[RMDB]
RNA sequence: GGGAACGACUCGAGUAGAGUCGAAAAGUUAACACCUUCGGGUGUUAACAAAUAAGGGAAGACGAGUGCAAAAAGCACAGUCUACCCAAGACAAAACGACAAAAACAUCUCCCUUCGGGGAGAUGAACGAUAUUGCUUACUUCGGUAAGCAAUAUCGAAAAGAAACAACAACAACAAC
Reactivity to DMS in 0.01 (KOAc 150mM, MgCl2 10mM, bicine 150mM(pH8.5), 24C), signal-to-noise 2, nucleotides 027 to 126: g040u000u000a020a010c030a000c010c000u000u010c210g040g010g070u000g010u000u000a000a000c000a000a090a060u030a100a070g000g000g040a130a060g010a000c000g000a150g060u000g020c010a040a130a050a160a160g010c000a000c020a280g020u000c000u000a050c000c010c000a090a060g000a110c120a070a060a080a080c190g020a090c160a060a060a070a110a080c010a000u000c010u000c000c000c000u000u000c180g010g030g000g000a000g000a000u000g010a010a090
Reactivity to 2A3 in 0.01 (KOAc 150mM, MgCl2 10mM, bicine 150mM(pH8.5), 24C), signal-to-noise 2, nucleotides 027 to 126: g000u010u000a010a010c000a010c000c000u050u090c250g060g000g000u010g010u000u000a010a000c000a000a020a000u120a030a000g000g000g000a010a010g010a000c040g070a200g100u020g010c020a030a130a140a300a150g020c000a010c010a000g000u000c000u020a050c010c010c000a030a010g130a030c080a010a140a030a030c100g130a010c060a030a080a010a010a050c000a000u000c000u020c020c000c000u010u020c170g010g030g000g000a000g000a000u000g000a010a000